The record gives the reactivity of an RNA of 177 nucleotides to 2A3 and DMS. The reactions ran in a buffer of 150 mM KOAc, 10 mM MgCl2 and 150 mM bicine (pH 8.5), at 24 C. It was measured as part of the RMDB library OK1LIB.
[RMDB]
RNA sequence: GGGAACGACUCGAGUAGAGUCGAAAAGAAAAGAAACCUCACAAUAAAAAGUGUGUGGAUGAUCGAAAGAUCAGGUGAGGAAAAGGCGAACACACACGACGCCGAAAUACUCAGAAAUGAGUAGAAAGGGUACUAACAUGUUCGCAUGUUAGUACCCAAAAGAAACAACAACAACAAC
Reactivity to 2A3 in 0.01 (KOAc 150mM, MgCl2 10mM, bicine 150mM(pH8.5), 24C), signal-to-noise 2, nucleotides 027 to 126: g030a000a130a000a000g130a040a040a010c030c000u020c000a000c010a010a130u210a220a100a010a030a040g020u010g000u000g000u020g040g000a060u060g000a000u000c000g080a090a000a010g010a010u000c010a020g060g000u010g010a000g030g000a010a140a000a010g040g000c010g030a100a000c020a000c010a000c000a000c100g000a000c000g000c000c000g020a010a100a000u020a000c000u000c000a000g030a000a020a030u030g000a000g000u010a000g040a010a060a000
Reactivity to DMS in 0.01 (KOAc 150mM, MgCl2 10mM, bicine 150mM(pH8.5), 24C), signal-to-noise 2, nucleotides 027 to 126: g000a140a110a150a070g000a040a070a130c000c000u010c000a000c000a180a070u040a070a010a140a150a210g000u000g020u000g030u000g030g000a110u070g000a000u000c000g060a210a070a130g010a010u010c020a000g000g000u040g000a000g000g030a060a000a060a120g000g000c000g000a140a160c030a010c010a030c000a010c000g000a080c090g000c040c000g000a120a090a060u010a000c060u000c000a000g010a090a040a180u000g000a000g010u000a040g000a040a010a070
DMS adducts were read by reverse transcription with MarathonRT.